[RMDB]
RNA sequence: GGGAACGACUCGAGUAGAGUCGAAAAUCACGGUUCGGAUCAGGGUAGAGGUCACCCAAGUCUGAGGUCGGCUUAAGACGAUGGUUUCGCUAUUGCGUAUCAGUUCGACCUUCAGAUCGGCGACCGAUAGUCCCAUCCGGUUCGCCGGAUGGGACUAAAAAGAAACAACAACAACAAC
Reactivity to DMS in 0.01 (KOAc 150mM, MgCl2 10mM, bicine 150mM(pH8.5), 24C), signal-to-noise 2, nucleotides 027 to 126: u010c030a150c040g010g010u010u020c020g000g010a040u010c060a140g000g000g000u000a060g010a250g020g020u010c010a000c010c010c080a110a150g010u000c010u020g010a030g000g000u000c000g000g000c040u000u010a130a160g010a140c050g010a020u010g010g010u000u050u000c230g000c020u000a050u000u000g000c060g000u000a050u010c300a040g030u000u010c010g020a010c010c020u010u010c000a000g000a000u000c150g000g020c060g000a020c010c010g020a190
Reactivity to 2A3 in 0.01 (KOAc 150mM, MgCl2 10mM, bicine 150mM(pH8.5), 24C), signal-to-noise 1, nucleotides 027 to 126: u070c010a020c020g020g000u050u070c030g000g060a090u090c060a090g050g010g010u020a040g080a050g070g080u000c030a050c000c000c010a030a030g040u070c000u060g000a000g020g000u010c000g000g010c000u070u100a100a080g080a030c040g000a030u030g010g080u070u190u130c130g000c040u060a070u110u220g020c000g020u070a020u160c010a010g020u220u300c010g000a010c000c000u070u090c010a020g000a000u030c000g060g060c000g000a000c000c010g030a020